Structure probing data (2A3 and DMS) for a 177-nucleotide construct.
For DMS, 12,081 sequencing reads were counted.
The data come from the RNA Mapping Database (RMDB), library OK2TST.
The RNA was probed in 150 mM KOAc, 10 mM MgCl2 and 150 mM bicine (pH 8.5) at 24 C.
Values cover nucleotides 27 to 126.
For DMS the reverse transcriptase was MarathonRT.
For 2A3, 2,355 sequencing reads were counted.
[RMDB]
RNA sequence: GGGAACGACUCGAGUAGAGUCGAAAAAAUGCUAAGAGCUGCCGGUAAGGAAAUUGGUGAUUUUGAAGACUUGAGUACCGAAAAUGAAAAGUUCUUGGGUAAGUUGGUUCGCGACAAAUACGACACAAAUGAUCAUAUGAUUCGUCAUAUGAUCAUUAAAAGAAACAACAACAACAAC
Reactivity to 2A3 in 0.01 (KOAc 150mM, MgCl2 10mM, bicine 150mM(pH8.5), 24C), signal-to-noise 3, nucleotides 027 to 126: a000a030u100g000c010u020a070a000g000a010g060c050u020g000c020c050g100g060u070a050a020g060g040a090a080a130u110u120g040g010u090g050a120u030u040u120u220g130a110a020g030a040c020u100u090g030a010g050u030a030c040c010g030a040a040a040a140u140g020a060a080a050a020g030u020u010c000u030u040g010g010g010u050a040a050g040u020u080g000g030u060u090c080g000c000g020a000c010a010a100a010u130a080c070g060a000c040a000c030a160
Reactivity to DMS in 0.01 (KOAc 150mM, MgCl2 10mM, bicine 150mM(pH8.5), 24C), signal-to-noise 8, nucleotides 027 to 126: a070a050u010g010c030u000a070a080g010a110g010c040u010g010c080c020g010g010u000a080a090g010g000a040a080a110u000u000g010g010u000g000a110u000u000u010u010g010a140a160g010a050c040u000u000g000a090g020u000a070c040c030g000a040a050a070a080u000g000a060a070a090a100g010u000u000c030u000u010g010g010g010u000a040a060g000u000u000g010g010u000u000c050g000c050g000a060c110a040a050a070u000a060c090g000a070c140a060c180a060